This 177-nucleotide RNA was probed chemically with 2A3 and DMS. It was measured as part of the RMDB library OK2TRN. For DMS the reverse transcriptase was MarathonRT.
[RMDB]
RNA sequence: GGGAACGACUCGAGUAGAGUCGAAAACAGCACGACCAGCCGCACCGCCGGAUCUGCUUCGGCCGCACUCAGCCCUUGAUGUAGUUGGCUGACCAGCGUGCUCGACAGCGCGUUGCGGUUGUGCGGACUGAUUGAAGCAUUUCGAUGCUUCAAUCAGAAAAGAAACAACAACAACAAC
Reactivity to 2A3 in 0.01 (KOAc 150mM, MgCl2 10mM, bicine 150mM(pH8.5), 24C), signal-to-noise 5, nucleotides 027 to 126: c010a010g140c080a020c100g070a130c040c020a030g040c000c010g000c000a010c010c020g020c020c020g060g050a100u010c030u060g030c050u040u020c010g010g000c000c000g000c010a020c020u010c000a010g000c000c020c030u090u160g240a280u230g140u220a090g050u090u170g040g000c000u000g010a020c020c030a010g010c020g130u240g010c040u060c030g030a040c060a030g020c000g000c010g000u000u030g120c010g000g000u000u000g000u000g010c010g010g010a040
Reactivity to DMS in 0.01 (KOAc 150mM, MgCl2 10mM, bicine 150mM(pH8.5), 24C), signal-to-noise 5, nucleotides 027 to 126: c080a110g000c160a090c070g000a070c070c030a080g000c010c000g010c020a030c030c040g010c030c100g030g000a050u000c060u000g000c100u000u000c010g010g000c000c000g000c020a280c260u000c010a020g000c000c010c060u000u000g020a230u000g000u000a030g010u010u010g010g000c000u000g010a030c170c130a140g010c010g020u010g010c010u000c050g020a030c140a020g020c050g000c200g000u000u000g000c030g010g000u000u000g020u010g010c000g000g000a150
The DMS profile rests on 5,694 reads.